[RMDB]
RNA sequence: GGGAACGACUCGAGUAGAGUCGAAAAAGCGCUACGUACUACGGUACGUAGCGCAAGCCUCCAGGCCUUGCAACACUUGGUCCGGAAGGCCCUGGAGGCACACGUAGGAUAUACGUAUCCUACGUGAUAGUCACGUAUUGUUCGCAAUACGUGACUAAAAAGAAACAACAACAACAAC
Reactivity to DMS in 0.01 (KOAc 150mM, MgCl2 10mM, bicine 150mM(pH8.5), 24C), signal-to-noise 1, nucleotides 027 to 126: a040g000c000g050c000u000a000c000g070u000a020c000u010a110c150g000g010u010a010c010g000u000a000g080c000g000c000a000a010g020c010c000u020c000c000a020g020g000c030c000u000u000g020c050a300a070c010a120c300u060u040g000g020u010c070c180g000g010a000a000g000g000c110c010c060u000g000g020a000g020g010c060a000c000a020c000g010u000a020g010g000a000u010a020u000a070c200g000u000a000u000c000c010u010a000c010g000u010g000a130
Reactivity to 2A3 in 0.01 (KOAc 150mM, MgCl2 10mM, bicine 150mM(pH8.5), 24C), signal-to-noise 3, nucleotides 027 to 126: a000g000c000g000c000u000a000c000g010u000a020c000u020a000c200g080g010u000a000c000g000u010a000g020c010g010c000a000a000g000c000c010u000c000c000a000g000g010c000c020u060u110g110c100a060a050c040a130c190u170u240g120g050u110c120c090g090g020a000a000g030g000c090c040c000u010g000g000a000g000g000c000a010c000a000c000g000u000a000g000g020a000u010a000u020a020c200g030u000a010u010c000c000u000a000c000g000u000g000a000